RNA sequence: GGGAACGACUCGAGUAGAGUCGAAAACAGAAGUCCAGACCAAAGAGUACCAUAGGUCCAAACUGCUAGAGAAGAUGGCCACAUUGAUUGAGAAGGGGGUUAUGUGGUACAUUGAUGCUGUGGGCCACUAUUUCCGUAGAUUCGUCUACGGAAAUAGAAAAGAAACAACAACAACAAC
Reactivity to DMS in 0.01 (KOAc 150mM, MgCl2 10mM, bicine 150mM(pH8.5), 24C), signal-to-noise 9, nucleotides 027 to 126: c070a090g000a080a080g020u000c030c060a080g010a100c060c060a050a090a110g000a130g010u000a090c070c070a090u010a080g030g010u010c010c030a060a100a150c080u000g000c030u000a090g010a160g010a100a170g010a030u000g000g000c010c020a020c020a020u000u010g010a080u000u010g010a100g010a070a070g010g000g010g000g010u000u000a020u000g010u000g010g010u010a040c010a020u000u000g010a120u020g000c020u000g010u000g000g000g010c020c030a210
Reactivity to 2A3 in 0.01 (KOAc 150mM, MgCl2 10mM, bicine 150mM(pH8.5), 24C), signal-to-noise 7, nucleotides 027 to 126: c030a020g110a150a010g060u010c040c020a020g050a050c020c020a120a060a030g080a040g050u070a050c020c030a100u090a180g020g000u010c000c010a070a140a150c070u060g000c020u070a020g010a010g020a300a040g030a030u020g010g010c020c000a010c000a030u050u150g080a080u060u150g120a150g100a220a130g040g000g000g010g000u050u020a010u030g000u000g010g010u060a120c000a000u020u050g020a030u080g000c000u000g010u050g010g010g000c000c010a010

Chemical mapping of a 177-nucleotide RNA with DMS and 2A3. 2A3 adducts were read by reverse transcription with SuperScript II with manganese. For 2A3, 12,102 sequencing reads were counted. For DMS, 14,491 sequencing reads were counted. Reactivities are given for positions 27 through 126.